An RNA of 207 nucleotides, treated with 2A3 and read out base by base. For 2A3 the reverse transcriptase was SuperScript II with manganese. The RNA was probed in 150 mM KOAc, 10 mM MgCl2 and 150 mM bicine (pH 8.5) at 24 C. It was measured as part of the RMDB library OK3TST.
RNA sequence: GGGAACGACUCGAGUAGAGUCGAAAAAUUUUAAACGCAAGCAUAAUGUCGAAAACAACGCUAUUGACUUUGACGAUAAUAUUACUCGAGUUCAGCCACAGUAUGCUGAACAGUCUGAUCGGUAUACCGAGGUAUCGCGUCCUGAAGGAUUUGAGCGGACAGUGACGGUAUUCGUACCGUCACUGUCAAAAGAAACAACAACAACAAC
Reactivity to 2A3 in 0.01 (KOAc 150mM, MgCl2 10mM, bicine 150mM(pH8.5), 24C), signal-to-noise 1, nucleotides 027 to 156: a000u060u110u070u020a050a080a000c030g000c040a000a040g040c000a020u040a190a100u300g050u100c080g100a100a040a100a040c020a110a060c090g040c010u050a040u060u100g020a090c000u100u000u000g030a000c040g030a010u010a120a010u090a130u040u100a090c000u000c000g000a000g020u050u030c040a000g000c000c000a060c000a000g100u090a000u090g040c000u000g020a060a000c000a000g160u040c040u090g070a210u060c000g000g020u010a000u000a000c010c010g050a020g000g010u140a030u180c030g000c020g020u000c000c050u040g080a150a020g000g060a030u000u040u080g040a020g060c090g000